[RMDB]
RNA sequence: GGGAACGACUCGAGUAGAGUCGAAAAGGAAGGAGAUGUUCAGUGCUACUCUGUGGCAGUUGGCAUGGGCAGCCGGUUCCUCCGGAGGCCUCUGCAGCAGGCGCAGAGCAGAGGGAGACCAAGGCCAAUAACACCUUCGGUUCGCCGAAGGUGUUAUAAAAGAAACAACAACAACAAC
Reactivity to DMS in 0.01 (KOAc 150mM, MgCl2 10mM, bicine 150mM(pH8.5), 24C), signal-to-noise 1, nucleotides 027 to 126: g010g010a120a040g000g000a110g010a130u000g010u010u010c140a080g010u010g020c010u000a040c020u000c020u000g020u000g000g020c010a110g000u010u000g020g010c030a020u010g010g010g010c010a050g020c010c010g000g000u000u040c290c220u000c010c010g020g000a070g010g010c020c000u000c140u000g020c010a040g000c030a070g000g010c030g000c010a020g000a010g000c070a010g000a080g000g000g020a160g000a120c110c070a010a100g000g000c050c090a060